[RMDB]
This 177-nucleotide RNA was probed chemically with DMS and 2A3.
The data come from the RNA Mapping Database (RMDB), library TTRDES.
Conditions: 150 mM KOAc, 10 mM MgCl2 and 150 mM bicine (pH 8.5), 24 C.

RNA sequence: GGGAACGACUCGAGUAGAGUCGAAAAGAUAUGGAAAUGCACGCGAGGAGCAACAGCCUCCAUUCGGAAACGAAUGUGAGGACAUGCUCCUCGCAUUUCCUAAGUCAAAGAUGUCUUCGGACAUCAAGCUUUUAAUAGUGUUCGCACUAUUAAAAGCAAAAGAAACAACAACAACAAC
Reactivity to DMS in 0.01 (KOAc 150mM, MgCl2 10mM, bicine 150mM(pH8.5), 24C), signal-to-noise 9, nucleotides 027 to 126: g010a040u010a300u010g010g010a000a010a020u010g020c110a200c300g040c180g010a020g010g000a010g000c000a030a080c300a160g000c000c000u000c000c010a020u010u000c000g000g000a130a100a200c010g010a010a000u000g010u020g020a010g010g000a010c070a090u000g000c010u000c000c000u000c000g010c000a000u000u000u000c010c000u000a070a160g000u000c050a080a120a130g000a020u000g010u000c000u000u010c220g020g010a010c000a010u010c000a090a130
Reactivity to 2A3 in 0.01 (KOAc 150mM, MgCl2 10mM, bicine 150mM(pH8.5), 24C), signal-to-noise 7, nucleotides 027 to 126: g020a020u070a020u160g010g030a010a020a000u070g070c120a030c300g300c210g040a010g000g000a000g000c040a040a120c080a140g090c010c000u000c000c000a000u000u000c010g010g030a070a060a050c020g010a010a000u070g190u300g050a000g000g010a010c000a000u030g000c000u000c000c000u010c000g000c000a000u000u000u010c000c000u000a070a020g030u010c040a070a080a040g000a000u010g000u000c010u050u140c300g150g000a000c010a010u000c020a020a030